An RNA of 207 nucleotides, treated with 2A3 and read out base by base. The data come from the RNA Mapping Database (RMDB), library OK3TST. The RNA was probed in 150 mM KOAc, 10 mM MgCl2 and 150 mM bicine (pH 8.5) at 24 C.
[RMDB]
RNA sequence: GGGAACGACUCGAGUAGAGUCGAAAACUAAACAUUUUUAUUAGCACAUAGUAUGUGUCAGCUCUUGGGGUUGAUACCAUGAAGAGUAAGAUACAAUCUCACUACCUAGAAAUGAGUCUACCCAAAUAGAGACUCUUUUUAAUGCUUUCAACCCAUACCUCCCUAAAUCGUUCGCGAUUUAGGGAGGAAAAGAAACAACAACAACAAC
Reactivity to 2A3 in 0.01 (KOAc 150mM, MgCl2 10mM, bicine 150mM(pH8.5), 24C), signal-to-noise 2, nucleotides 027 to 156: c030u030a040a080a100c040a190u130u110u090u180u260a220u100u220a010g000c030a000c000a080u140a090g170u210a130u080g020u020g020u020c050a040g030c060u020c030u080u070g020g000g000g000u050u020g010a000u030a070c020c000a030u070g080a050a090g000a010g040u050a070a030g020a030u160a150c070a080a210u000c020u010c030a020c040u070a060c030c000u020a070g090a040a040a000u030g000a020g000u000c010u000a080c010c000c100a030a030a030u200a010g030a010g000a010c010u140c000u020u000u010u000u010a040a080u060g000c000u070u040u040c040a020a030c000c000c000a000u040a100